This 207-nucleotide RNA was probed chemically with DMS and 2A3.
RNA sequence: GGGAACGACUCGAGUAGAGUCGAAAACGCUGGGAAGUCGAGACGAUUCAUGGGAGCUGAAGCGCGCACGGCAUCGAUCAUGCGUCGUCUAAGACAGCUUCCUGUGCUGAAGCGCGCACGGCAACCGAAAGGUGCGAGGGGGUUCUUCGGAACCCAAUUUCUAAUAGUACUUCGGUACUAUUAGAAAAAAAGAAACAACAACAACAAC
Reactivity to DMS in 0.01 (KOAc 150mM, MgCl2 10mM, bicine 150mM(pH8.5), 24C), signal-to-noise 3, nucleotides 027 to 156: c070g000c080u000g000g000g010a020a030g020u010c010g000a060g020a050c010g030a050u010u000c020a050u020g000g010g010a090g040c000u010g020a040a070g030c000g020c000g030c030a300c050g010g000c000a220u000c180g000a070u000c010a040u010g010c080g020u000c020g010u000c030u000a120a070g020a120c300a060g000c020u010u000c010c010u000g050u000g000c010u000g000a080a050g020c010g020c020g050c000a190c040g010g000c040a080a220c010c020g010a120a080a130g020g000u000g010c020g020a110g000g010g010g030g000u000u000c010u000u010c230g030g010a040a040c000c000c000a000a030
Reactivity to 2A3 in 0.01 (KOAc 150mM, MgCl2 10mM, bicine 150mM(pH8.5), 24C), signal-to-noise 4, nucleotides 027 to 156: c030g000c030u050g010g010g010a010a000g030u060c020g010a000g010a040c010g000a000u020u010c010a010u020g040g010g010a040g000c010u030g020a260a040g020c010g000c000g000c010a020c000g020g010c000a040u300c100g020a020u020c010a010u010g010c020g010u000c000g000u010c010u040a060a040g010a000c000a000g000c000u000u000c000c010u050g050u040g000c030u080g030a150a040g000c020g000c010g000c020a010c010g020g000c060a080a040c010c010g040a080a050a020g030g000u030g000c030g030a100g110g080g010g000g000u000u010c020u050u060c200g140g010a000a010c000c000c000a000a020

2A3 adducts were read by reverse transcription with SuperScript II with manganese. Source: RMDB library RNAMAK, as collected in RNAgym.